Source: RMDB library OK3TST, as collected in RNAgym. This 207-nucleotide RNA was probed chemically with 2A3. Reactivities are given for positions 27 through 156. 2A3 adducts were read by reverse transcription with SuperScript II with manganese.

[RMDB]
RNA sequence: GGGAACGACUCGAGUAGAGUCGAAAAAGACACAAGUAUGAUUUGGAGAAGAAACAGCAGUCAUAGAUAAAUCAAAUUAUCAAUAAACGUAACACAUUGAUAGAGAGCUUUAAUGAAGAGCCAAUAAGCACAUGAACAGGAUGCUUCGUGUAUGAAAUCGAGGGUCGAGGUUCGCCUCGACCCUCGAAAAAGAAACAACAACAACAAC
Reactivity to 2A3 in 0.01 (KOAc 150mM, MgCl2 10mM, bicine 150mM(pH8.5), 24C), signal-to-noise 1, nucleotides 027 to 156: a000g050a000c040a000c010a060a000g000u010a080u070g100a070u050u030u090g010g040a040g040a030a070g030a080a140a020c030a050g050c030a010g010u050c120a040u060a010g040a070u130a090a060a000u150c040a050a050a050u110u040a080u130c030a010a040u180a110a060a060c080g030u020a030a000c040a000c000a070u040u030g000a000u030a010g020a000g000a000g060c030u080u010u090a060a000u050g040a060a040g010a010g040c030c050a010a000u130a100a000g040c020a000c000a040u060g030a060a000c000a020g110g010a020u040g030c060u000u080c040g030u030g020u010a070u000g040a020a000a000
The RNA was probed in 150 mM KOAc, 10 mM MgCl2 and 150 mM bicine (pH 8.5) at 24 C.